[RMDB]
Structure probing data (2A3 and DMS) for a 177-nucleotide construct.
For 2A3, 3,329 sequencing reads were counted.
RNA sequence: GGGAACGACUCGAGUAGAGUCGAAAAUUGCAUCCAAUGUGAAGAAAACCAUGGAAACUCGUGCACCUGAGGACCUCAAUCGCACAGUUCCUCUUGGGUUUACCUUCAGUUUCCCCGUGGAGCAGACAAUAAAUACCCGGUUCGCCGGGUAUUUAUUAAAAGAAACAACAACAACAAC
Reactivity to 2A3 in 0.01 (KOAc 150mM, MgCl2 10mM, bicine 150mM(pH8.5), 24C), signal-to-noise 4, nucleotides 027 to 126: u120u110g030c040a120u000c000c010a050a060u050g020u020g040a020a020g010a010a050a000a010c000c000a030u050g000g000a040a100a050c020u040c180g010u020g000c020a040c060c080u040g020a040g060g130a110c010c040u030c020a040a080u130c070g000c030a010c000a010g000u020u020c020c010u050c060u050u110g130g000g010u010u000u040a070c000c000u000u010c020a020g010u030u040u010c010c010c000c020g020u030g000g000a010g010c040a020g010a050c070
Reactivity to DMS in 0.01 (KOAc 150mM, MgCl2 10mM, bicine 150mM(pH8.5), 24C), signal-to-noise 4, nucleotides 027 to 126: u040u020g000c070a100u010c000c020a030a080u020g010u010g000a030a010g000a100a040a040a000c030c000a080u020g010g000a040a030a030c010u000c190g050u000g010c010a170c300c200u010g010a020g020g010a130c230c000u000c000a030a080u060c240g000c000a030c030a040g000u000u010c040c010u020c130u000u010g010g000g000u010u000u010a050c200c010u010u000c000a030g010u040u000u020c010c000c000c010g000u010g000g010a020g020c030a090g000a120c170
The RNA was probed in 150 mM KOAc, 10 mM MgCl2 and 150 mM bicine (pH 8.5) at 24 C.